[RMDB]
The data come from the RNA Mapping Database (RMDB), libraries RFM100 and RFMREP. This 177-nucleotide RNA was probed chemically with DMS and 2A3.
RNA sequence: GGGAACGACUCGAGUAGAGUCGAAAAUGUCAAUAGUAGUCUAAAGAGGCGUGCUUUACCAAGUCAUGGUUUAGUGCGAAGCCCUCUUGACAAUGCAGUCCUUUACAGAAAUAUCCAAUGUAUAGGCAUAAAACAAAUCUUUCGAGAUUUGUUUUAUAAAAGAAACAACAACAACAAC
Reactivity to DMS in 0.01 (KOAc 150mM, MgCl2 10mM, bicine 150mM(pH8.5), 24C), signal-to-noise 9, nucleotides 027 to 126: u020g010u020c090a080a110u030a100g010u020a110g010u010c030u020a050a020a010g010a010g000g010c010g020u000g000c000u000u000u000a000c000c000a050a220g020u040c290a130u010g000g000u000u000u000a010g030u000g000c010g010a130a100g010c290c010c000u000c000u000u000g000a040c080a100a100u030g010c180a070g010u020c000c000u000u000u000a010c010a030g000a070a080a080u030a080u030c040c050a110a110u000g010u000a010u000a010g010g010c070
Reactivity to 2A3 in 0.01 (KOAc 150mM, MgCl2 10mM, bicine 150mM(pH8.5), 24C), signal-to-noise 9, nucleotides 027 to 126: u150g020u030c010a000a040u040a150g150u030a030g010u000c040u170a170a040a010g020a000g010g020c020g000u010g000c000u020u010u010a010c010c000a100a120g190u190c060a230u100g000g000u000u010u010a010g000u020g010c010g040a080a040g090c010c000c000u000c000u000u010g000a000c000a010a040u130g050c050a010g040u100c000c000u010u030u010a020c010a010g150a090a150a020u230a090u100c060c040a050a070u030g000u000a010u020a030g020g000c010
The reactions ran in a buffer of 150 mM KOAc, 10 mM MgCl2 and 150 mM bicine (pH 8.5), at 24 C.